Source information
Structure probing data (DMS) for a 177-nucleotide construct.
RNA sequence: GGGAACGACUCGAGUAGAGUCGAAAAGAUAUGGACCCUUGACAUGCUUAAUUCUCGGAAACGAGAAUUGAAGCAACAGCAAGGUCCUAAGUCAAAAGAUUGCUCGAUGUUCGCAUCGAGCAAUCAAUCUAGAAGGACUCUUCGGAGUCCUUCUAGAAAAAGAAACAACAACAACAAC
Reactivity to DMS in 0.01 (KOAc 150mM, MgCl2 10mM, bicine 150mM(pH8.5), 24C), signal-to-noise 1, nucleotides 027 to 126: g010a030u000a300u030g010g000a000c080c060c090u000u020g000a080c140a150u010g020c000u010u030a010a010u000u000c000u000c000g000g000a060a060a140c010g000a010g010a030a020u000u030g000a000a000g010c000a030a090c260a130g000c000a000a000g000g030u000c000c000u000a030a160g000u000c020a030a030a060a150g010a000u000u000g030c020u000c000g000a020u000g000u000u000c220g020c000a000u000c000g000a010g000c010a000a000u000c000a050a080
The DMS profile rests on 853 reads. The reactions ran in a buffer of 150 mM KOAc, 10 mM MgCl2 and 150 mM bicine (pH 8.5), at 24 C. It was measured as part of the RMDB library TTRDEL.